[RMDB]
RNA sequence: GGGAACGACUCGAGUAGAGUCGAAAAAGUGGCUAGUUCGCUAGCCACUAAACACCGCACGGCAGCGGAAAUAAGCCGAAACGCAAACAGAAGCGACUGAAAGACUCCAAACAUUCGUGUUUGGAAAACGGAGACUAUGAUUCGUCAUAGUCUCCGUAAAAGAAACAACAACAACAAC
Reactivity to DMS in 0.01 (KOAc 150mM, MgCl2 10mM, bicine 150mM(pH8.5), 24C), signal-to-noise 1, nucleotides 027 to 126: a010g030u010g000g030c000u000a010g020u000u000c150g000c000u010a000g000c000c000a000c000u000a020a090a110c120a300c000c010g030c070a090c040g000g000c020a140g000c000g010g010a050a050a030u000a070a100g000c000c010g010a080a070a180c020g000c080a060a120a100c150a130g000a230a090g020c010g010a050c110u000g000a010a050a110g020a150c170u000c000c020a010a040a010c000a060u000u000c210g040u000g000u000u000u000g000g000a020a020a070

Structure probing data (DMS) for a 177-nucleotide construct.
The RNA was probed in 150 mM KOAc, 10 mM MgCl2 and 150 mM bicine (pH 8.5) at 24 C.
It was measured as part of the RMDB library M2PK50.
For DMS the reverse transcriptase was MarathonRT.